The record gives the reactivity of an RNA of 177 nucleotides to DMS and 2A3.
For 2A3, 1,354 sequencing reads were counted.
The reactions ran in a buffer of 150 mM KOAc, 10 mM MgCl2 and 150 mM bicine (pH 8.5), at 24 C.
Values are in units of 0.01, from 0 to 300, in steps of 10.

RNA sequence: GGGAACGACUCGAGUAGAGUCGAAAAGGUGCAUCUGGGCGGACACCUCGGCCUGGAUGCCGGAUUCGGCCGCAAACUGCGCCAGCACAAGGUCACCAGUGACGAACUCGGCGACUACAUCGACCGGGGACAGGGUGUAAUUCGUUACACCCUGUCCAAAAGAAACAACAACAACAAC
Reactivity to DMS in 0.01 (KOAc 150mM, MgCl2 10mM, bicine 150mM(pH8.5), 24C), signal-to-noise 2, nucleotides 027 to 126: g000g000u030g000c050a010u000c010u000g020g010g000c010g010g010a110c110a130c290c180u020c040g010g030c010c010u010g010g010a000u030g030c000c040g000g000a160u000u000c040g000g010c040c060g030c060a100a060a120c120u010g040c060g000c070c030a120g070c050a030c130a110a080g030g010u000c030a110c070c020a070g000u000g000a090c130g030a030a120c050u000c060g020g010c030g010a060c050u010a050c100a240u010c050g010a110c010c060g040g020
Reactivity to 2A3 in 0.01 (KOAc 150mM, MgCl2 10mM, bicine 150mM(pH8.5), 24C), signal-to-noise 2, nucleotides 027 to 126: g040g040u200g030c000a000u000c020u030g010g000g030c000g030g000a040c040a110c100c090u040c060g220g000c000c020u020g010g010a010u020g000c000c000g010g020a060u140u100c020g000g060c140c050g000c060a090a180a200c100u120g000c010g040c000c000a010g000c020a040c020a040a110g050g010u040c010a010c030c010a040g080u020g080a000c010g020a080a070c000u040c000g000g000c000g070a070c050u140a040c060a040u000c040g170a150c010c030g010g000